Structure probing data (DMS) for a 177-nucleotide construct.

[RMDB]
RNA sequence: GGGAACGACUCGAGUAGAGUCGAAAAGAGCGACUUAAUAUUAGAUCGUCGCGAUCUAAACAGUCCGACACGCUGUCGCGGGGCAGCACCUCCCGGGAAAGGGCCCUUGGUACGUAUUCGAAAGAAACAUACCGGAUCACUUCGGUGAUCCGGUAUGAAAAGAAACAACAACAACAAC
Reactivity to DMS in 0.01 (KOAc 150mM, MgCl2 10mM, bicine 150mM(pH8.5), 24C), signal-to-noise 1, nucleotides 027 to 126: g000a130g040c080g060a010c030u000u000a130a200u000a160u010u000a030g010a050u010c050g010u040c180g020c080g030a020u010c000u000a010a080a300c200a080g010u000c040c010g010a130c100a070c190g010c050u000g000u000c000g030c240g000g000g000g000c090a040g000c000a170c120c050u010c000c000c000g020g000g020a010a070a080g000g000g000c030c000c020u000u000g030g000u010a060c070g000u020a110u000u030c020g000a040a070a180g000a090a080a170

For DMS, 666 sequencing reads were counted. The reactions ran in a buffer of 150 mM KOAc, 10 mM MgCl2 and 150 mM bicine (pH 8.5), at 24 C. It was measured as part of the RMDB library OK2TRN.